An RNA of 177 nucleotides, treated with 2A3 and DMS and read out base by base.
For 2A3 the reverse transcriptase was SuperScript II with manganese.
The data come from the RNA Mapping Database (RMDB), library OK1LIB.
[RMDB]
RNA sequence: GGGAACGACUCGAGUAGAGUCGAAAACGGACUCGGGGGCAGUACCCGACGCCUCCACCAAAACUUUCUAAAUAACUUGCUCCUAAAGGUAAUUUGUACGUCGAUCCGGUACUCGAAUCCUCACGUACAGUAAGUUUUCCUUCGGGAAAACUUACUGAAAAGAAACAACAACAACAAC
Reactivity to 2A3 in 0.01 (KOAc 150mM, MgCl2 10mM, bicine 150mM(pH8.5), 24C), signal-to-noise 3, nucleotides 027 to 126: c030g040g030a040c060u100c090g000g000g000g010g000c050a050g040u070a090c000c000c000g040a050c010g030c000c000u090c000c020a020c030c060a050a060a070a120c030u050u130u060c070u080a180a100a210u110a090a100c030u000u160g000c010u020c050c050u070a070a040a030g090g000u010a150a130u050u060u210g050u020a020c020g010u000c010g010a030u010c010c030g020g010u060a060c040u010c040g040a060a080u090c000c010u040c010a070c010g060u060a020
Reactivity to DMS in 0.01 (KOAc 150mM, MgCl2 10mM, bicine 150mM(pH8.5), 24C), signal-to-noise 1, nucleotides 027 to 126: c070g000g070a030c100u040c060g060g000g000g000g010c060a200g050u030a170c080c020c020g010a170c200g000c070c000u000c000c000a270c070c140a120a010a010a100c030u000u000u000c030u010a070a110a110u050a110a080c030u000u000g000c030u000c050c000u000a140a000a040g000g050u000a020a060u000u000u000g000u030a010c000g000u000c070g000a020u040c000c000g020g100u110a010c000u000c080g020a050a080u000c000c030u030c090a010c050g020u000a020